[RMDB]
Source: RMDB library OK1LIB, as collected in RNAgym. An RNA of 177 nucleotides, treated with DMS and 2A3 and read out base by base. For 2A3 the reverse transcriptase was SuperScript II with manganese.
RNA sequence: GGGAACGACUCGAGUAGAGUCGAAAAAUUCGCUGCAGCUGCUGCAUGGGCCUGUAACAAACUUGUAUAAGAUUGUGACCUAUUCAUGGAGCCGCCAGUGGAGUUUGGCUGCAAAGGAUGAGCAGAAAGCACCACCAUUAUUCGUAAUGGUGGUGCUAAAAGAAACAACAACAACAAC
Reactivity to DMS in 0.01 (KOAc 150mM, MgCl2 10mM, bicine 150mM(pH8.5), 24C), signal-to-noise 2, nucleotides 027 to 126: a020u000u000c000g010c110u000g000c110a090g000c010u000g000c000u000g010c060a010u000g010g000g000c240c120u010g070u030a080a040c030a000a010a050c040u000u000g030u060a130u050a060a020g020a070u010u000g000u000g000a100c130c100u030a080u080u090c060a060u000g000g000a010g020c050c110g000c010c000a060g020u000g020g020a030g020u000u030u010g000g040c020u040g000c000a040a070a130g010g010a090u040g000a050g010c080a080g000a080a060
Reactivity to 2A3 in 0.01 (KOAc 150mM, MgCl2 10mM, bicine 150mM(pH8.5), 24C), signal-to-noise 2, nucleotides 027 to 126: a010u050u060c020g000c000u020g000c070a040g020c010u000g000c000u030g180c000a020u000g010g010g000c020c040u020g010u030a030a000c020a010a020a020c000u050u010g120u260a090u170a300a010g020a030u060u000g000u000g030a020c020c010u040a010u040u040c020a010u010g050g030a000g000c000c000g030c000c000a010g000u020g050g020a070g000u040u110u030g050g010c010u030g010c030a030a000a150g080g000a080u130g050a030g000c050a030g000a010a060
Overview:
Values cover nucleotides 27 to 126. Conditions: 150 mM KOAc, 10 mM MgCl2 and 150 mM bicine (pH 8.5), 24 C. For 2A3, 1,486 sequencing reads were counted.